[RMDB]
RNA sequence: GGGAACGACUCGAGUAGAGUCGAAAACUAACGAACUAUCAUCUCUCAUCUCUCAGGGGAUAUGCUGACCGUGUGGACGUAUGACAAGGAUAGAUCGGGGGAUUGCUUUCAAACGGGCUUAGGAGUAUACCUAAUAGUAGUUCGCUACUAUUAGGUAAAAAGAAACAACAACAACAAC
Reactivity to 2A3 in 0.01 (KOAc 150mM, MgCl2 10mM, bicine 150mM(pH8.5), 24C), signal-to-noise 9, nucleotides 027 to 126: c020u060a060a030c040g050a030a030c030u050a050u140c020a060u020c030u000c010u000c040a070u010c030u000c000u000c050a040g040g030g000g030a040u040a050u210g040c040u050g040a070c010c030g140u060g030u080g120g040a030c030g090u120a070u100g020a040c030a070a040g060g000a030u040a060g060a040u060c040g000g000g000g000g000a040u020u110g020c020u050u090u100c060a090a080a040c050g030g010g000c030u030u060a030g030g020a030g030u040a030
Reactivity to DMS in 0.01 (KOAc 150mM, MgCl2 10mM, bicine 150mM(pH8.5), 24C), signal-to-noise 9, nucleotides 027 to 126: c060u010a070a130c120g010a060a080c080u000a050u000c060a060u000c050u000c130u000c040a060u000c040u000c030u000c060a080g010g000g000g000a100u010a050u010g010c090u000g010a120c050c040g010u000g020u010g010g010a090c150g010u000a040u010g010a080c110a070a090g010g000a070u000a040g010a050u000c050g010g000g000g000g000a080u000u000g010c070u000u000u000c100a040a070a120c170g010g000g010c050u000u000a070g000g000a080g010u010a140
The record gives the reactivity of an RNA of 177 nucleotides to 2A3 and DMS. Conditions: 150 mM KOAc, 10 mM MgCl2 and 150 mM bicine (pH 8.5), 24 C. The data come from the RNA Mapping Database (RMDB), library OK2TRN. For DMS the reverse transcriptase was MarathonRT.